[RMDB]
RNA sequence: GGGAACGACUCGAGUAGAGUCGAAAAUCGGAUUUGACCCCGGAGUAGGCCCCAGUCGCUUAGACGAGCAGGUACGUCAGCACACUGCCCACGACGCCGCCGGCGAUGGUGGCUGCGAAGGUUGCUGCCUGCCAGGUGUCCUUAGCCGCCGCCUUCGGCAACGUAUUAAUUUCGAUUAAUACGUUGCAAAAGAAACAACAACAACAAC
Reactivity to DMS in 0.01 (KOAc 150mM, MgCl2 10mM, bicine 150mM(pH8.5), 24C), signal-to-noise 2, nucleotides 027 to 156: u000c050g010g010a230u010u010u020g010a180c020c000c010c020g020g020a120g010u010a050g010g010c010c000c020c050a160g000u000c050g050c070u000u000a130g010a090c030g020a090g030c030a070g030g030u000a040c070g050u010c130a150g030c030a130c050a060c030u000g030c000c010c020a090c040g020a060c020g040c020c020g020c040c030g010g020c110g010a050u010g000g040u000g010g020c000u000g020c030g020a150a080g020g010u000u020g000c020u000g000c010c010u010g000c050c030a150g010g030u000g010u020c020c010u040u000a100g000c040c030g000c030c010g000c060c010u000u000c040g030
Reactivity to 2A3 in 0.01 (KOAc 150mM, MgCl2 10mM, bicine 150mM(pH8.5), 24C), signal-to-noise 4, nucleotides 027 to 156: u100c010g020g040a050u100u060u160g120a110c010c000c000c010g040g010a050g030u100a050g010g040c020c010c010c030a010g050u070c030g020c070u120u130a040g010a060c020g010a040g020c040a030g020g040u090a040c050g030u010c040a010g010c030a020c010a010c040u050g020c010c030c000a060c030g100a020c050g020c010c010g120c060c080g030g010c030g020a030u050g040g020u010g020g000c030u020g000c030g030a030a010g040g000u080u100g020c030u030g010c000c020u020g040c030c020a080g020g030u060g020u070c000c000u020u070a020g010c010c010g000c000c000g020c000c030u050u060c020g040
Conditions: 150 mM KOAc, 10 mM MgCl2 and 150 mM bicine (pH 8.5), 24 C. An RNA of 207 nucleotides, treated with DMS and 2A3 and read out base by base. For DMS the reverse transcriptase was MarathonRT. The data come from the RNA Mapping Database (RMDB), library OK3TST. For 2A3 the reverse transcriptase was SuperScript II with manganese.